[RMDB]
RNA sequence: GGGAACGACUCGAGUAGAGUCGAAAAGUCCUGGGGACACGCUGGACAAUCUAGCAUUCACUGUGUUUCCAUCAGCGGAUUCUGAGAUGGAUUUAAUCUGAGGACAUUUGGUGAAUCCAAAGUUCAUUCUCAAACCUCCACCGAUGAUGGAGUAAUAAAUCGCGUGUAGAUUCGUCUACACGCGAUUAAAAGAAACAACAACAACAAC
Reactivity to 2A3 in 0.01 (KOAc 150mM, MgCl2 10mM, bicine 150mM(pH8.5), 24C), signal-to-noise 1, nucleotides 027 to 156: g040u000c010c010u040g000g020g060g000a010c010a020c030g000c010u020g000g020a040c050a070a150u130c060u060a020g010c010a040u130u120c080a050c130u090g000u000g040u030u190u010c020c000a010u010c000a000g010c070g000g020a030u090u010c010u120g030a070g020a120u100g040g010a000u000u020u090a080a030u070c050u070g010a030g070g050a050c060a300u000u010u020g000g000u020g040a070a050u050c070c070a010a040a000g040u050u020c010a010u070u020c070u010c000a020a080a100c000c020u000c020c020a010c010c020g000a010u010g010a000u010g010g030a030g030u010a030a120u090a040